This 207-nucleotide RNA was probed chemically with 2A3 and DMS. For 2A3 the reverse transcriptase was SuperScript II with manganese. The RNA was probed in 150 mM KOAc, 10 mM MgCl2 and 150 mM bicine (pH 8.5) at 24 C. Reactivities are given for positions 27 through 156. High 2A3 reactivity points to a flexible backbone, as in loops and unpaired stretches.
[RMDB]
RNA sequence: GGGAACGACUCGAGUAGAGUCGAAAAGUAUAGCAUGACUGGCGAUGCGUAUACGAUGAAUCAGCCAGGAAAGAAUCCGUUGUGCGAAAGCACUUCGGUAAUGCAUAAUCGGUUCGAGUACAGCCCGAUACGAGAACCGUUGUUAGUACGGGCUAGAAUAAUAGUGAGUGUUCGCACUCACUAUUAUAAAAGAAACAACAACAACAAC
Reactivity to 2A3 in 0.01 (KOAc 150mM, MgCl2 10mM, bicine 150mM(pH8.5), 24C), signal-to-noise 2, nucleotides 027 to 156: g050u040a050u110a170g020c000a000u050g060a120c010u010g000g040c000g000a020u010g020c020g050u090a100u070a110c190g030a140u280g100a060a060u040c010a030g000c000c010a010g030g000a060a050a000g030a010a050u010c000c000g000u000u000g000u000g050c020g040a020a010a000g000c000a000c000u000u000c000g000g000u010a040a010u030g010c040a070u100a300a020u190c050g000g000u020u000c010g030a020g000u010a040c000a040g000c000c000c030g010a010u000a010c010g010a000g000a040a020c010c000g000u020u040g020u010u040a120g030u020a040c050g000g000g020c000u010a030g070a170
Reactivity to DMS in 0.01 (KOAc 150mM, MgCl2 10mM, bicine 150mM(pH8.5), 24C), signal-to-noise 3, nucleotides 027 to 156: g030u000a070u000a140g010c010a050u000g010a180c000u010g010g010c010g050a050u000g000c030g020u000a140u020a070c140g040a170u000g010a060a070u000c070a160g080c000c000a070g010g000a100a060a160g010a300a230u000c020c000g020u000u000g000u000g000c010g020a160a130a240g000c010a000c000u000u000c000g020g010u000a030a040u000g030c060a150u010a130a120u010c030g030g040u000u000c020g020a300g000u010a030c000a080g000c020c000c010g020a180u000a000c010g020a300g000a030a000c000c000g040u000u000g000u000u020a180g020u000a120c100g000g010g000c060u000a050g010a190